RNA sequence: GGGAACGACUCGAGUAGAGUCGAAAACGGGCUCCACAGGGCAGGGUGGUUGCUAACGGCAACCCGGGGUGACCCGCGGGACAGUGCCACAGAAAACAGACCGCCCGGCCGACAGCGGCCGGGUAAGAGGUUUAAUGUUAUUCGUAACAUUAAACCUAAAAGAAACAACAACAACAAC
Reactivity to DMS in 0.01 (KOAc 150mM, MgCl2 10mM, bicine 150mM(pH8.5), 24C), signal-to-noise 4, nucleotides 027 to 126: c110g000g000g000c030u000c020c040a090c140a140g020g000g030c070a050g000g000g010u040g010g000u000u010g000c010u000a100a130c210g000g030c030a040a070c020c000c030g010g000g020g000u020g020a180c020c000c020g020c130g020g010g020a120c130a090g000u050g020c040c030a120c140a080g000a090a060a070a120c180a100g000a100c120c060g000c010c000c000g000g060c010c030g000a080c300a160g000c080g010g080c020c000g000g010g050u020a020a020g000
Reactivity to 2A3 in 0.01 (KOAc 150mM, MgCl2 10mM, bicine 150mM(pH8.5), 24C), signal-to-noise 5, nucleotides 027 to 126: c020g000g020g010c010u050c040c020a040c040a130g020g050g030c050a070g020g040g090u090g010g020u060u030g000c010u060a170a020c080g060g000c000a020a030c000c010c000g020g000g000g020u080g120a150c020c010c010g030c090g000g000g030a050c060a060g070u040g080c020c000a060c010a050g140a050a080a020a010c030a020g100a050c010c010g000c000c000c000g010g000c000c000g050a070c060a130g290c040g030g000c000c000g010g000g000u030a050a010g050